[RMDB]
RNA sequence: GGGAACGACUCGAGUAGAGUCGAAAAUCAAGGAUGAAGGACGCGUCGCCGCCACCCUAGAGGCGGCAUCCCCCGCGUGACGCCCUCUGCAGGCACCGUCGUGACCGGAUUCCUUGACUCACUUUGUAGUAUCUUCUAGGUUCGCCUAGAAGAUACUAAAAGAAACAACAACAACAAC
Reactivity to DMS in 0.01 (KOAc 150mM, MgCl2 10mM, bicine 150mM(pH8.5), 24C), signal-to-noise 4, nucleotides 027 to 126: u010c020a040a000g000g000a000u010g010a300a110g000g000a120c020g020c000g000u000c040g010c190c050g010c000c020a060c150c230c110u040a120g000a060g000g020c010g000g000c000a010u010c000c020c000c030c050g000c080g030u010g000a040c040g000c100c020c020u010c060u020g020c190a090g020g000c010a040c260c050g000u000c020g050u030g000a140c000c000g000g010a140u000u000c010c000u000u000g000a010c070u020c080a140c060u020u000u020g010u020
Reactivity to 2A3 in 0.01 (KOAc 150mM, MgCl2 10mM, bicine 150mM(pH8.5), 24C), signal-to-noise 9, nucleotides 027 to 126: u040c000a000a000g010g000a010u010g000a020a020g010g010a020c010g010c000g020u050c050g020c050c030g010c010c010a100c070c020c020u090a060g020a040g050g000c000g000g000c000a000u020c000c010c000c010c020g030c020g020u020g010a020c020g040c040c030c020u080c050u100g080c150a100g000g000c020a030c040c030g020u030c010g020u040g040a070c000c000g000g000a000u000u010c000c000u000u000g010a020c000u020c010a080c010u030u030u060g290u050
The record gives the reactivity of an RNA of 177 nucleotides to DMS and 2A3. 2A3 adducts were read by reverse transcription with SuperScript II with manganese. High DMS reactivity at an A or C suggests that its Watson-Crick edge is free. Values cover nucleotides 27 to 126.